[RMDB]
RNA sequence: GGGAACGACUCGAGUAGAGUCGAAAAUUACAUAAGUCUAACACCUUGUUUCGGACUAACAAGGGCGGAUGGAGGAUGGCCGGACCUCCAUAGUUAGACGUCCGAGAACCAGCCGAAAUGAAAAAGAAUUUACGCGUAGCUUCGGCUACGCGUAAAUAAAAGAAACAACAACAACAAC
Reactivity to 2A3 in 0.01 (KOAc 150mM, MgCl2 10mM, bicine 150mM(pH8.5), 24C), signal-to-noise 1, nucleotides 027 to 126: u110u090a030c060a120u200a150a000g010u010c000u000a000a010c070a020c010c000u000u040g030u040u040u080c250g090g060a190c110u040a000a000c000a040a000g000g010g040c040g280g190a020u000g000g000a000g000g000a020u130g010g000c000c000g000g050a100c000c010u000c000c000a000u030a020g020u020u030a020g000a000c020g000u000c020c000g070a010g050a040a030c000c030a000g020c000c000g010a050a040a120u160g120a070a070a000a000a000g080a060
Reactivity to DMS in 0.01 (KOAc 150mM, MgCl2 10mM, bicine 150mM(pH8.5), 24C), signal-to-noise 1, nucleotides 027 to 126: u020u000a160c260a110u020a120a140g000u000c020u010a020a060c010a180c000c020u000u020g000u000u000u000c050g000g000a150c100u050a050a000c010a040a090g020g000g000c300g020g050a020u000g020g020a000g000g000a200u000g010g000c000c020g000g030a190c000c000u000c000c000a020u000a060g020u000u000a000g000a040c000g000u000c050c070g000a130g000a070a080c030c060a030g300c000c000g070a010a080a010u000g050a040a150a130a020a010g000a060
Annotation: The record gives the reactivity of an RNA of 177 nucleotides to 2A3 and DMS. The reactions ran in a buffer of 150 mM KOAc, 10 mM MgCl2 and 150 mM bicine (pH 8.5), at 24 C. The 2A3 profile rests on 990 reads. For DMS, 1,457 sequencing reads were counted. 2A3 adducts were read by reverse transcription with SuperScript II with manganese. For DMS the reverse transcriptase was MarathonRT.